[RMDB]
RNA sequence: GGGAACGACUCGAGUAGAGUCGAAAACUCGCUCAAACAUACAGAGGUGUUGUGCGAUAUGAAUCUCUCUGCAUUAGAAUGGUCGAAGAAUCAGCGGCUAUUCGAGACCCAAUUAGAAGCCGCAUUAACAGCUUUGGAACACGCCUUGCUGACGUGAACUGCUACGAUGAUUCGUCAUCGUAGCAGUAAAAGAAACAACAACAACAAC
Reactivity to 2A3 in 0.01 (KOAc 150mM, MgCl2 10mM, bicine 150mM(pH8.5), 24C), signal-to-noise 2, nucleotides 027 to 156: c000u010c000g030c010u040c030a120a150a040c020a010u170a110c070a050g070a060g080g010u010g010u050u020g000u000g020c010g000a010u020a040u230g240a190a110u050c070u000c000u000c020u080g030c020a100u110u100a060g130a170a160u150g000g010u000c020g020a100a010g030a040a110u070c040a040g000c000g010g000c000u030a020u010u040c010g000a020g000a040c020c000c000a030a150u130u100a100g050a080a000g000c000c010g000c010a000u090u070a060a030c000a000g050c050u110u090u180g080g030a110a010c030a010c080g010c000c010u020u030g000c020u000g030a030c030g040u020g030a040
Reactivity to DMS in 0.01 (KOAc 150mM, MgCl2 10mM, bicine 150mM(pH8.5), 24C), signal-to-noise 1, nucleotides 027 to 156: c060u000c080g020c020u000c050a030a090a110c070a100u020a120c050a110g000a070g040g040u020g010u000u010g020u000g030c010g020a150u000a110u030g020a040a130u000c090u000c040u000c050u000g010c050a080u000u000a150g020a030a100u010g010g080u000c030g050a120a150g000a110a060u000c060a130g030c050g020g030c000u000a110u020u000c000g000a240g000a160c000c010c070a080a230u020u040a140g010a100a040g010c030c000g030c020a290u020u000a050a070c070a040g000c090u000u010u000g020g000a180a190c040a050c040g000c000c000u000u000g020c150u020g020a030c050g000u010g000a100

About this RNA: An RNA of 207 nucleotides, treated with 2A3 and DMS and read out base by base. It was measured as part of the RMDB library OK3TST. Reactivities are given for positions 27 through 156. DMS adducts were read by reverse transcription with MarathonRT. For 2A3 the reverse transcriptase was SuperScript II with manganese.